[RMDB]
The data come from the RNA Mapping Database (RMDB), library TTRDES. The record gives the reactivity of an RNA of 177 nucleotides to DMS and 2A3. The reactions ran in a buffer of 150 mM KOAc, 10 mM MgCl2 and 150 mM bicine (pH 8.5), at 24 C. For 2A3, 4,355 sequencing reads were counted.
RNA sequence: GGGAACGACUCGAGUAGAGUCGAAAAGAUAUGGAACCCUGUCGACAUGCUGACAUAUCGGAAACGAUAUGUAGCAACAGCGACGGGUUCCUAAGUCAAAACAUCCGAGGAGUUCGCUCCUCGGAUGCUUUGUGUCGUUGUUCGCAACGACACAAAGAAAAGAAACAACAACAACAAC
Reactivity to DMS in 0.01 (KOAc 150mM, MgCl2 10mM, bicine 150mM(pH8.5), 24C), signal-to-noise 3, nucleotides 027 to 126: g020a010u000a110u000g000g010a010a000c000c000c000u000g060u010c000g000a050c180a120u010g020c000u000g010a070c000a010u000a000u000c000g040g010a040a030a080c000g000a010u000a000u000g010u000a010g000c010a060a140c210a120g020c010g010a000c030g020g000g000u020u000c000c010u000a000a060g000u020c020a140a070a130a300c030a000u000c000c000g000a020g040g010a010g000u000u010c280g010c000u010c010c000u000c000g000g000a000u000g010
Reactivity to 2A3 in 0.01 (KOAc 150mM, MgCl2 10mM, bicine 150mM(pH8.5), 24C), signal-to-noise 2, nucleotides 027 to 126: g000a000u010a010u070g010g020a010a010c000c020c120u180g030u010c010g030a150c120a240u300g000c010u030g100a060c010a010u000a000u000c010g010g000a020a000a010c020g020a000u020a000u000g020u000a010g000c030a180a070c100a220g040c000g000a000c000g000g010g020u000u020c000c000u000a000a010g010u000c000a000a040a160a080c000a000u000c000c010g000a000g030g000a020g010u130u300c300g170c220u000c000c000u020c000g010g010a010u000g010